[RMDB]
RNA sequence: GGGAACGACUCGAGUAGAGUCGAAAAGAAAGGCAGCCAGUGCAGCCCACGCAGAGGCAUGCUUUUGCAUGCCCAGUCGAGCCCACGACUUAGGGCAGCUGCGUCACUGAGGGCAGCUGCCGAAAGACCACCUAAUGCGUUUCGACGCAUUAGGUGGAAAAGAAACAACAACAACAAC
Reactivity to DMS in 0.01 (KOAc 150mM, MgCl2 10mM, bicine 150mM(pH8.5), 24C), signal-to-noise 1, nucleotides 027 to 126: g000a080a060a160g020g010c000a070g000c030c050a160g000u000g000c080a140g040c020c030c060a100c100g000c100a130g000a170g020g000c000a000u000g000c000u000u000u020u030g000c020a000u000g000c010c000c000a050g000u000c020g010a100g010c000c000c000a190c050g010a070c060u020u000a140g020g000g010c020a080g000c010u000g050c030g020u000c110a150c110u000g010a080g010g010g010c040a120g020c000u000g010c000c000g000a000a050a100g030a150
Reactivity to 2A3 in 0.01 (KOAc 150mM, MgCl2 10mM, bicine 150mM(pH8.5), 24C), signal-to-noise 2, nucleotides 027 to 126: g080a040a110a020g020g000c020a000g020c070c010a030g050u040g060c020a030g050c010c000c020a040c100g070c010a040g030a110g130g000c020a060u000g040c000u280u220u220u300g020c030a010u010g000c000c000c000a000g020u030c000g000a040g010c060c000c020a020c000g100a010c060u080u190a070g040g040g000c010a000g010c000u040g030c020g040u060c030a090c150u140g080a180g010g100g040c000a000g000c000u020g010c000c000g010a020a000a010g040a020